Chemical mapping of a 207-nucleotide RNA with 2A3. For 2A3, 651 sequencing reads were counted. The RNA was probed in 150 mM KOAc, 10 mM MgCl2 and 150 mM bicine (pH 8.5) at 24 C. The data come from the RNA Mapping Database (RMDB), library OK3TST.

RNA sequence: GGGAACGACUCGAGUAGAGUCGAAAAGCAAUGCCUGAAGUAGAAGGAGAAGAAAUACAACCACAAAUGGAAUUGAGGAGAAAUGGUAGGCAAUGUGGCAUGUCUGAAAAAGAGGAGGAAUGAUGAAGUAUCUCAGACUUAUUUUAUAAGGGAGAUAUCGAUGACUGUCAUUCGUGACAGUCAUCGAAAAAGAAACAACAACAACAAC
Reactivity to 2A3 in 0.01 (KOAc 150mM, MgCl2 10mM, bicine 150mM(pH8.5), 24C), signal-to-noise 2, nucleotides 027 to 156: g090c050a030a050u120g030c010c080u100g030a140a010g040u090a040g010a110a000g040g020a020g000a010a010g010a010a130a020u190a100c100a070a050c040c040a070c120a160a200a120u080g020g020a050a080u100u090g050a020g050g000a050g030a040a050a010u100g010g040u040a060g030g000c060a000a060u050g000u020g010g000c040a010u120g050u000c040u030g040a000a160a000a060a000g060a000g000g010a010g000g000a000a060u090g010a010u060g030a040a030g010u060a010u000c040u000c010a010g050a100c040u020u020a060u100u200u030u050a150u070a080a010g070g030g020a020g010a030u140a020